Conditions: 150 mM KOAc, 10 mM MgCl2 and 150 mM bicine (pH 8.5), 24 C.
This 207-nucleotide RNA was probed chemically with DMS and 2A3.
For DMS the reverse transcriptase was MarathonRT.
2A3 adducts were read by reverse transcription with SuperScript II with manganese.
It was measured as part of the RMDB library RNAMAK.
[RMDB]
RNA sequence: GGGAACGACUCGAGUAGAGUCGAAAAGGGGUCCACUUGUCAGACCUAGUAGCUGAGCUUGGAUUUAUGUGGCUGAAGCCUCCACGGCCACAUUGUCAGCUCCGAAAGGUCUUGGAUUUAGUGGACGGAGGCACCCAAAGGCGGUUUCGACCGCCAAGGUUUAUACAAGGUUCGCCUUGUAUAAACCAAAAGAAACAACAACAACAAC
Reactivity to DMS in 0.01 (KOAc 150mM, MgCl2 10mM, bicine 150mM(pH8.5), 24C), signal-to-noise 1, nucleotides 027 to 156: g010g020g010g010u000c010c010a040c030u010u020g030u000c030a100g000a010c000c000u000a110g040u020a170g030c110u010g000a060g050c070u020u020g050g010a170u000u000u010a060u000g070u000g020g050c000u000g000a040a130g010c030c000u020c000c000a300c120g000g010c000c000a030c000a000u020u000g000u000c070a060g000c020u020c030c040g010a110a160a070g040g020u000c010u010u000g000g010a100u000u000u000a050g030u000g020g020a050c020g000g030a030g090g000c030a080c000c000c000a140a140a190g000g000c000g020g020u000u000u000c200g000a070c050c000g010c000c000a000a190
Reactivity to 2A3 in 0.01 (KOAc 150mM, MgCl2 10mM, bicine 150mM(pH8.5), 24C), signal-to-noise 5, nucleotides 027 to 156: g120g010g050g000u000c010c000a010c010u030u060g020u020c020a020g000a000c000c000u050a100g100u090a020g040c210u140g020a010g030c080u170u230g230g010a120u260u300u100a030u080g000u000g010g000c000u000g000a110a010g010c010c000u000c000c020a030c030g010g010c000c000a000c000a000u000u020g030u010c050a020g020c010u010c020c040g140a230a130a030g000g000u000c010u030u080g070g000a030u170u150u200a010g000u010g000g000a000c000g000g000a000g000g000c010a050c010c030c000a060a090a080g020g010c030g020g010u040u080u220c240g090a040c000c000g000c000c000a000a020